[RMDB]
RNA sequence: GGGAACGACUCGAGUAGAGUCGAAAAGAUAUGGAACCGACAAGACAUGAGGGCGGUCGGAAACGACCGUACCUCAACAGCUUGUUCGGUUCCUAAGUCAAAAUCCUUCCUGUUCGCAGGAAGGAAACUUAAGACUGAACUUCGGUUCAGUCUUAAGAAAAGAAACAACAACAACAAC
Reactivity to DMS in 0.01 (KOAc 150mM, MgCl2 10mM, bicine 150mM(pH8.5), 24C), signal-to-noise 3, nucleotides 027 to 126: g000a030u000a150u020g000g000a010a000c000c000g000a030c000a010a020g020a080c110a150u010g010a020g000g000g000c010g000g000u010c010g010g000a030a030a050c010g000a000c000c000g010u000a050c000c000u000c010a030a030c260a180g000c000u000u000g000u010u010c010g010g020u000u000c000c000u000a010a060g000u010c010a120a090a100a140u000c000c000u000u000c000c000u000g020u010u010c250g010c010a010g000g000a020a010g010g010a010a010a060
Reactivity to 2A3 in 0.01 (KOAc 150mM, MgCl2 10mM, bicine 150mM(pH8.5), 24C), signal-to-noise 2, nucleotides 027 to 126: g000a000u040a010u070g000g010a000a000c010c010g010a000c010a010a010g050a010c090a300u300g010a000g010g010g030c010g020g010u000c020g010g000a140a010a000c020g020a010c000c070g020u110a020c010c020u020c000a000a020c010a010g040c010u000u010g000u080u080c000g000g020u000u000c000c020u010a000a020g000u000c000a030a000a000a220u000c000c000u000u030c010c000u060g050u070u050c300g020c070a000g000g010a000a000g000g000a000a000a000